RNA sequence: GGGAACGACUCGAGUAGAGUCGAAAACCCGUCGUGUUCGCACGACGGGAACUACCGAGAAUGGAGCUCGGUAUAAAACUCCAACCCUUGGAAAGAAGGGAACAAUCGCCACUUUCGAGUGGCGAAACGUGAUGCAUCCUUUCGAGGAUGCAUCACGAAAAGAAACAACAACAACAAC
Reactivity to 2A3 in 0.01 (KOAc 150mM, MgCl2 10mM, bicine 150mM(pH8.5), 24C), signal-to-noise 1, nucleotides 027 to 126: c000c000c000g000u000c010g000u010g050u010u070c240g000c110a000c000g040a000c020g020g000g000a000a000c040u060a040c010c010g010a010g000a020a280u160g020g030a030g000c000u000c030g020g010u010a020u040a000a000a000a000c000u000c000c000a100a160c030c010c000u020u000g130g300a110a050a110g070a060a020g020g000g080a000a030c050a010a130u020c000g030c000c000a010c020u000u180u150c270g050a030g000u010g010g000c040g000a000a000a000
Notes:
The data come from the RNA Mapping Database (RMDB), library M2PK50. The record gives the reactivity of an RNA of 177 nucleotides to 2A3. The RNA was probed in 150 mM KOAc, 10 mM MgCl2 and 150 mM bicine (pH 8.5) at 24 C. 2A3 adducts were read by reverse transcription with SuperScript II with manganese. Values are in units of 0.01, from 0 to 300, in steps of 10.